[RMDB]
Record summary:
The data come from the RNA Mapping Database (RMDB), library TTRDES. The record gives the reactivity of an RNA of 177 nucleotides to 2A3 and DMS. For 2A3, 16,126 sequencing reads were counted. 2A3 adducts were read by reverse transcription with SuperScript II with manganese. Conditions: 150 mM KOAc, 10 mM MgCl2 and 150 mM bicine (pH 8.5), 24 C.
RNA sequence: GGGAACGACUCGAGUAGAGUCGAAAAGAUAUGGACCCAUUAAGCUGCAAACGAAAUGGUCGGAAACGACCACUUCGGACGUAUAGCUUUGUGGGUCCUAAGUCAAAAUCUAGCCUUCGGGCUAGAAGGUUUUAGAUAUGUUCGCAUAUCUAAAACCAAAAGAAACAACAACAACAAC
Reactivity to 2A3 in 0.01 (KOAc 150mM, MgCl2 10mM, bicine 150mM(pH8.5), 24C), signal-to-noise 7, nucleotides 027 to 126: g000a000u000a010u060g000g010a010c020c010c000a010u060u060a000a000g000c010u280g300c300a200a000a010c000g000a010a000a010u010g010g000u000c000g020g000a000a000a000c000g000a000c000c000a000c010u000u000c010g010g020a000c120g190u250a300u300a300g000c000u010u010u010g030u000g000g030g010u000c000c000u000a000a000g000u000c000a000a000a000a150u030c000u000a000g000c010c000u060u090c300g110g000g000c010u000a000g010a010a120
Reactivity to DMS in 0.01 (KOAc 150mM, MgCl2 10mM, bicine 150mM(pH8.5), 24C), signal-to-noise 4, nucleotides 027 to 126: g010a000u000a020u010g000g000a000c000c000c000a010u000u010a010a000g030c000u000g030c140a080a020a030c010g030a000a010a010u000g000g000u000c000g020g010a010a000a030c000g010a010c010c000a010c020u000u010c000g010g040a300c230g030u000a070u020a010g030c000u000u000u000g020u000g000g010g020u000c000c000u000a000a060g000u010c000a100a070a130a180u000c000u000a000g010c000c000u000u000c270g030g010g020c000u000a000g000a030a100